[RMDB]
RNA sequence: GGGAACGACUCGAGUAGAGUCGAAAACCGCUAAGUUCGCUUAGCGGAAAAAAACCUUUGUGUAGUGCCAUGGGAGUCACACGGUCCCAUUGGGACCGUGAAUGACGAAGAACAUGGCUCUACACUCUGGUAAAAAACAGGACCUUCGGGUCCUGAAGAAAGAACAGAUGUUCGCAUCUGUUCUUUCAAAAGAAACAACAACAACAAC
Reactivity to 2A3 in 0.01 (KOAc 150mM, MgCl2 10mM, bicine 150mM(pH8.5), 24C), signal-to-noise 1, nucleotides 027 to 156: c000c010g000c000u000a000a010g030u030u180c190g000c250u010u000a020g000c010g010g000a250a000a000a000a000a000a020c000c010u000u000u000g010u000g000u000a000g000u000g000c010c010a010u000g000g000g060a060g060u000c010a010c000a000c030g000g020u010c110c030c110a150u190u280g000g000g000a000c000c020g000u000g000a000a110u020g000a000c000g010a200a000g030a030a010c000a000u000g000g000c000u000c000u000a010c000a000c000u000c000u030g010g010u170a090a090a000a090a000a000c000a000g010g010a000c010c030u120u190c300g120g000g000u010c000c010u000g000a000a010
Description: An RNA of 207 nucleotides, treated with 2A3 and read out base by base. High 2A3 reactivity points to a flexible backbone, as in loops and unpaired stretches. The RNA was probed in 150 mM KOAc, 10 mM MgCl2 and 150 mM bicine (pH 8.5) at 24 C. The 2A3 profile rests on 841 reads. Values cover nucleotides 27 to 156.